[RMDB]
RNA sequence: GGGAACGACUCGAGUAGAGUCGAAAAUCGUGGUCCAACCUCAGUGCUGCGAAGGACCGUCCGACUACAGCGUUUAGUUGGUACAUUUCAACAGGCUCAGGGACGCCACGCAACGACAUGGAUCCAACUGGUAUACCGAGUUCGCUCGGUAUACCAGAAAAGAAACAACAACAACAAC
Reactivity to 2A3 in 0.01 (KOAc 150mM, MgCl2 10mM, bicine 150mM(pH8.5), 24C), signal-to-noise 2, nucleotides 027 to 126: u040c000g010u020g020g000u070c090c030a050a020c050c000u020c020a010g020u070g120c000u010g000c020g050a080a030g060g050a070c050c030g000u010c000c020g000a030c010u030a020c050a180g110c070g110u190u120u030a000g000u000u030g010g010u150a030c000a110u030u060u050c020a040a070c010a010g020g000c010u010c010a000g020g000g020a010c020g000c000c000a000c010g000c010a090a020c020g110a020c050a090u180g040g080a040u050c020c010a010a050
Reactivity to DMS in 0.01 (KOAc 150mM, MgCl2 10mM, bicine 150mM(pH8.5), 24C), signal-to-noise 3, nucleotides 027 to 126: u000c040g040u000g010g050u020c030c020a090a300c000c000u000c250a050g000u000g010c020u010g010c160g010a050a080g000g000a070c290c150g010u000c000c010g000a040c010u010a050c110a230g000c230g010u000u010u000a040g020u010u010g020g000u010a070c090a110u010u000u000c010a040a100c010a030g000g000c000u000c120a020g010g000g010a190c300g000c000c010a010c020g010c080a040a080c040g000a040c050a130u020g000g000a130u000c020c040a050a170